Structure probing data (2A3 and DMS) for a 170-nucleotide construct.
It was measured as part of the RMDB library 15KLIB.
For 2A3, 16,782 sequencing reads were counted.
For 2A3 the reverse transcriptase was SuperScript II with manganese.

[RMDB]
RNA sequence: GGGAACGACUCGAGUAGAGUCGAAAACUGAUGUUAUAGUAGGUGACUAUGUCAUUAUUAGUGAAAAAUUGUUUGUGCGUAGUAAGGAAGAAGACGGAUUUGCCUUCUACCCUGCUUGCACUAAUGGAAAGUAUGUUCUUCGGAACAUACAAAAGAAACAACAACAACAAC
Reactivity to 2A3 in 0.01 (KOAc 150mM, MgCl2 10mM, bicine 150mM(pH8.5), 24C), signal-to-noise 8, nucleotides 027 to 129: c040u050g030a050u140g010u020u030a000u000a000g020u000a010g020g070u160g060a040c080u090a020u040g030u010c020a010u010u050a000u020u100a070g090u090g120a070a040a030a100a080u110u130g030u050u030u060g020u010g000c010g010u020a000g010u030a040a060g020g020a030a010g010a010a000g000a020c050g050g070a190u100u120u270g040c000c000u000u020c000u010a030c000c000c000u000g010c010u000u000g000c010a000c000u000a000a020u000g040g020a080a030a020
Reactivity to DMS in 0.01 (KOAc 150mM, MgCl2 10mM, bicine 150mM(pH8.5), 24C), signal-to-noise 7, nucleotides 027 to 129: c110u020g020a050u050g010u030u000a000u020a030g040u000a000g030g030u040g040a160c250u040a020u020g030u000c030a030u000u000a040u020u020a080g050u000g030a070a050a080a080a150u030u020g030u000u010u010g000u000g010c040g000u010a010g040u040a000a000g020g020a180a030g000a010a010g020a050c000g030g020a230u010u000u010g040c050c010u000u070c040u030a050c040c000c010u000g020c000u040u030g000c040a020c020u010a000a040u040g040g010a040a060a050